[RMDB]
RNA sequence: GGGAACGACUCGAGUAGAGUCGAAAAGAAGCCUUGGCCUCUGACACACCACCAGAACGGUGCUACGAGGAAGUAACUGAGACUAACGGGAACAAGAAACUCCCUAUGGGUUGUGCCUUCUGUUCCUUUAAGAAGGAGUGCUGGAAAGAUGCUAACGCACCCUUUACUUGUUCGCAAGUAAAGGGUGAAAAGAAACAACAACAACAAC
Reactivity to 2A3 in 0.01 (KOAc 150mM, MgCl2 10mM, bicine 150mM(pH8.5), 24C), signal-to-noise 2, nucleotides 027 to 156: g040a040a010g030c020c040u040u050g030g000c000c000u030c030u040g040a010c000a020c000a030c080c040a030c050c020a060g030a160a030c070g060g010u040g050c010u060a040c020g020a000g020g020a020a000g000u030a080a020c060u090g040a020g030a090c040u070a110a040c080g000g040g010a020a010c030a190a030g040a090a060a010c030u020c000c010c000u040a170u140g050g010g030u100u050g000u050g050c010c010u060u040c030u040g030u030u070c000c000u020u030u030a090a070g010a000a000g020g010a020g010u030g030c050u060g040g040a050a040a040g050a040u130g020c040u050a030a070c040g010
Reactivity to DMS in 0.01 (KOAc 150mM, MgCl2 10mM, bicine 150mM(pH8.5), 24C), signal-to-noise 2, nucleotides 027 to 156: g030a100a130g020c020c040u010u010g010g040c000c000u000c000u000g000a300c170a100c020a040c040c010a090c060c070a240g010a080a150c130g040g000u010g000c040u000a130c190g010a300g000g020a050a100g000u000a060a090c020u000g000a140g010a090c050u000a070a100c140g010g000g030a040a090c010a070a120g000a120a130a050c030u000c000c020c020u000a130u010g020g030g030u010u000g030u000g000c050c050u000u000c050u000g020u000u000c020c040u000u000u000a060a080g030a080a020g000g010a130g020u010g000c050u000g010g000a050a070a120g010a130u000g000c040u000a120a170c100g050
Chemical mapping of a 207-nucleotide RNA with 2A3 and DMS.
It was measured as part of the RMDB library OK3TST.
The 2A3 profile rests on 1,477 reads.